[RMDB]
RNA sequence: GGGAACGACUCGAGUAGAGUCGAAAAGGGGUCAUAGACAUGUCGAUUCCCAGGAGCAACAGCUAUACUGAAGCCUCCACGGUAUAGACAUGCUCCUGCAUCGACAACAGCUAUGACGGAGGCACCCAAAAGCUUUACGACUUCGGUCGUAAAGCAAGUACGUCUCUGGGUUCGCCCAGAGACGUACAAAAGAAACAACAACAACAAC
Reactivity to 2A3 in 0.01 (KOAc 150mM, MgCl2 10mM, bicine 150mM(pH8.5), 24C), signal-to-noise 1, nucleotides 027 to 156: g060g000g100g000u010c010a010u000a000g020a070c090a190u300g000u000c010g000a000u070u110c030c010c000a020g000g010a000g020c050a030a100c020a220g040c020u010a000u010a010c000u020g050a140a070g050c020c030u000c000c010a000c030g030g020u000a030u000a020g100a160c070a180u250g000c010u000c000c000u000g030c050a000u000c000g030a010c000a070a010c010a040g000c000u000a000u000g000a000c010g040g010a000g000g010c040a030c000c020c000a040a110a000a080g000c000u010u010u000a000c030g010a000c000u000u110c300g070g000u000c000g000u000a000a000a000g000c000a000a000